[RMDB]
RNA sequence: GGGAACGACUCGAGUAGAGUCGAAAAGACCUUAGGAUUUGUCCGAAAAGUAUGACAAAGUCGGAUCUAGGCUAAGGAAGGAUGGGCGAAUAAUCUUUUGUCAUACUUAGAUUUUAAAUCCAUCCAAGAUUGUAGAGUAUUUCGAUACUUUGCAAUCAAAAGAAACAACAACAACAAC
Reactivity to DMS in 0.01 (KOAc 150mM, MgCl2 10mM, bicine 150mM(pH8.5), 24C), signal-to-noise 9, nucleotides 027 to 126: g010a160c010c000u000u010a020g000g000a110u020u010u030g010u010c010c010g010a070a090a080a080g010u000a010u000g000a050c050a080a080a130g010u010c030g000g000a030u010c110u020a050g010g000c020u000a030a020g000g010a160a080g000g010a000u000g000g000g000c040g010a120a060u030a010a010u000c020u000u010u010u000g010u000c070a030u000a010c020u000u000a040g000a030u000u000u020u010a050a200a200u000c000c000a000u000c010c010a100a170
Reactivity to 2A3 in 0.01 (KOAc 150mM, MgCl2 10mM, bicine 150mM(pH8.5), 24C), signal-to-noise 8, nucleotides 027 to 126: g050a050c000c000u010u020a010g030g010a070u060u020u140g020u000c000c000g010a040a000a010a030g020u010a030u050g020a010c030a030a140a020g070u040c010g000g010a030u010c040u080a050g080g000c010u020a020a020g020g030a040a060g010g000a020u010g000g010g020c020g060a080a040u190a060a010u020c000u000u060u020u030g030u020c010a010u010a010c000u010u020a010g000a000u020u050u010u090a020a060a020u020c000c000a000u000c000c010a020a050